An RNA of 207 nucleotides, treated with 2A3 and DMS and read out base by base. In probing experiments dimethyl sulfate is read out at A N1 and C N3, which are open when not base-paired. The RNA was probed in 150 mM KOAc, 10 mM MgCl2 and 150 mM bicine (pH 8.5) at 24 C.

[RMDB]
RNA sequence: GGGAACGACUCGAGUAGAGUCGAAAAGAGACAGGGCACUGCUAAGGCCCAAAUCUCAGCCAUGCAUCGAGGGGUACAAUCCGUAUGGCCAACAACUGGCGCGUACGUAAAGUCUCCUUUCUCGAUGGUCCAUACCUUAGAUGCGUUAGCAUUAAUCGAAUGCUAAUUGCUUCGGCAAUUAGCAUUCAAAAGAAACAACAACAACAAC
Reactivity to 2A3 in 0.01 (KOAc 150mM, MgCl2 10mM, bicine 150mM(pH8.5), 24C), signal-to-noise 4, nucleotides 027 to 156: g010a000g010a000c050a090g030g000g030c050a080c270u150g070c130u250a050a090g050g000c000c000c020a010a080a030u000c000u000c000a010g030c030c010a060u170g050c010a010u010c020g010a010g030g000g000g000u070a010c010a020a020u000c050c010g000u000a000u010g000g000c010c000a050a080c030a070a050c200u050g000g000c170g000c010g150u000a000c000g010u020a000a030a040g020u010c090u120c080c030u040u140u000c010u010c020g000a000u010g010g030u060c060c000a090u090a240c000c040u090u140a040g010a080u050g020c030g070u080u090a060g000c010a010u040u120a060a040u210c100
Reactivity to DMS in 0.01 (KOAc 150mM, MgCl2 10mM, bicine 150mM(pH8.5), 24C), signal-to-noise 1, nucleotides 027 to 156: g020a120g040a010c070a300g000g020g010c000a050c110u000g020c110u000a070a110g060g010c020c020c040a000a020a080u000c000u000c000a290g000c020c000a070u020g050c020a060u000c020g000a070g040g040g040g050u010a020c020a070a300u000c160c000g000u000a020u000g000g050c000c000a000a180c100a160a110c290u010g050g020c030g000c070g070u020a010c020g010u000a060a070a110g000u000c020u000c000c000u000u000u000c030u050c000g000a070u030g010g010u020c070c080a130u000a140c030c090u000u020a010g020a150u000g010c020g050u000u000a090g000c020a120u000u000a050a160u000c000
Description:
For DMS the reverse transcriptase was MarathonRT. For 2A3 the reverse transcriptase was SuperScript II with manganese.